[RMDB]
RNA sequence: GGGAACGACUCGAGUAGAGUCGAAAAGAUAUGGAGAUAACGUGAGGAACAACAGCGUUGACCUCGGAAACGAGGUAACGACAUGUUCCUCUAUCUCCUAAGUCAAAGAGGCGGUUCGCCGCCUCAAUCAAAACUUAAUGUUCGCAUUAAGUUUUGAAAAAGAAACAACAACAACAAC
Reactivity to 2A3 in 0.01 (KOAc 150mM, MgCl2 10mM, bicine 150mM(pH8.5), 24C), signal-to-noise 9, nucleotides 027 to 126: g010a000u050a020u110g020g010a010g010a010u040a190a150c300g190u150g050a010g010g020a030a060c170a050a040c070a280g050c020g010u020u070g300a300c000c000u000c010g000g000a040a040a010c010g000a000g000g000u010a010a000c000g040a010c020a050u300g000u000u000c010c000u000c000u000a000u000c000u000c000c000u000a060a010g020u010c030a040a080a220g010a010g000g000c000g000g060u070u160c300g060c080c000g000c000c000u000c000a000a020
Reactivity to DMS in 0.01 (KOAc 150mM, MgCl2 10mM, bicine 150mM(pH8.5), 24C), signal-to-noise 9, nucleotides 027 to 126: g000a030u000a300u010g000g010a020g000a010u010a020a200c300g030u010g010a010g010g010a010a000c010a080a090c280a180g000c010g000u000u000g010a040c000c010u000c000g010g000a060a040a110c010g010a010g010g000u000a010a000c000g010a030c090a280u010g000u000u000c000c000u000c000u000a010u000c010u000c000c000u000a030a090g000u000c020a090a120a140g000a010g000g030c000g020g010u010u020c300g020c000c000g020c000c000u000c000a020a090
An RNA of 177 nucleotides, treated with 2A3 and DMS and read out base by base.
The RNA was probed in 150 mM KOAc, 10 mM MgCl2 and 150 mM bicine (pH 8.5) at 24 C.
Reactivities are rounded to 0.1 and cut off at 0 and 3.
For DMS the reverse transcriptase was MarathonRT.
2A3 adducts were read by reverse transcription with SuperScript II with manganese.